Background: Structure probing data (2A3 and DMS) for a 177-nucleotide construct. The data come from the RNA Mapping Database (RMDB), library TTRDES. Conditions: 150 mM KOAc, 10 mM MgCl2 and 150 mM bicine (pH 8.5), 24 C.
RNA sequence: GGGAACGACUCGAGUAGAGUCGAAAAGAUAUGGACUGCUAAGGGAGCCUAUCAUCGGAAACGAUGAUCAGGCGAAGAACUUAGCCAGUCCUAAGUCAAAAGGCUAGCUAAGUUCGCUUAGCUAGCCGCUGCAAAUACAGUUCGCUGUAUUUGCAGCAAAAGAAACAACAACAACAAC
Reactivity to 2A3 in 0.01 (KOAc 150mM, MgCl2 10mM, bicine 150mM(pH8.5), 24C), signal-to-noise 4, nucleotides 027 to 126: g000a010u010a000u050g000g000a010c010u010g000c000u010a000a020g020g010g010a060g040c010c010u010a000u000c010a000u000c000g000g000a010a000a000c010g000a000u020g010a010u080c300a010g010g010c010g020a030a010g010a000a010c000u010u000a000g020c030c010a000g000u000c000c000u000a000a010g000u000c000a050a080a130a100g000g000c000u000a000g000c000u000a010a000g020u080u120c300g080c210u010u000a000g000c000u000a000g010c000c010
Reactivity to DMS in 0.01 (KOAc 150mM, MgCl2 10mM, bicine 150mM(pH8.5), 24C), signal-to-noise 6, nucleotides 027 to 126: g010a020u000a020u000g000g000a010c020u000g020c010u010a020a010g030g000g010a060g010c010c000u000a040u000c000a000u000c000g020g000a010a010a030c010g010a020u000g010a010u000c300a000g020g020c010g020a050a080g000a230a300c000u010u000a000g010c140c300a020g000u000c000c000u000a000a040g000u000c010a140a100a110a170g000g010c000u000a000g000c000u000a010a010g010u000u010c300g010c010u000u000a000g000c000u000a000g010c000c000
The 2A3 profile rests on 23,297 reads. 2A3 is a SHAPE reagent: it acylates the 2'-hydroxyl of flexible nucleotides of all four kinds. 2A3 adducts were read by reverse transcription with SuperScript II with manganese.